An RNA of 207 nucleotides, treated with 2A3 and DMS and read out base by base. For 2A3, 1,307 sequencing reads were counted. It was measured as part of the RMDB library OK3TST.
RNA sequence: GGGAACGACUCGAGUAGAGUCGAAAAGAAAGAGCCUGAAUACGGAGAACCGUAACGCAUGACCGAAUAUUCAGCCCAGUUCACGACGUAAGUCGUGCGCCCGAGUCUUUCUCUGGGCGCUGGGGUCACGUACAUGCGUCAGGCAGGAGAGAGAGAACCGUAAAUACCGGUUCGCCGGUAUUUACGGAAAAGAAACAACAACAACAAC
Reactivity to 2A3 in 0.01 (KOAc 150mM, MgCl2 10mM, bicine 150mM(pH8.5), 24C), signal-to-noise 3, nucleotides 027 to 156: g070a020a080a010g050a010g010c020c020u030g080a100a090u090a050c030g030g000a130g070a240a250c010c020g010u040a020a000c000g010c000a000u000g010a020c020c070g050a100a060u160a160u290u250c100a100g040c000c000c000a040g020u170u170c050a010c000g030a000c020g040u110a150a120g000u010c000g000u000g010c000g000c000c000c010g040a020g040u080c130u050u180u050c010u010c020u070g000g020g000c000g000c000u000g010g010g020g030u080c060a010c080g010u060a070c010a000u010g010c000g000u000c000a000g000g030c000a010g020g020a040g000a010g000a000g000a000g020a040a040
Reactivity to DMS in 0.01 (KOAc 150mM, MgCl2 10mM, bicine 150mM(pH8.5), 24C), signal-to-noise 1, nucleotides 027 to 156: g030a100a070a100g000a110g020c040c000u000g000a070a270u000a020c050g020g000a160g020a110a170c050c020g010u020a110a300c000g000c010a020u020g020a110c060c020g020a210a090u000a200u000u000c130a180g000c010c010c010a090g000u000u000c040a060c000g020a000c000g030u010a110a200g010u000c000g060u010g000c100g010c010c010c010g010a060g000u000c200u000u000u000c000u000c020u010g020g000g030c020g060c000u000g020g020g010g020u010c020a030c050g030u020a110c030a040u000g000c020g010u010c020a050g040g020c070a060g020g030a080g010a160g000a140g000a130g000a110a200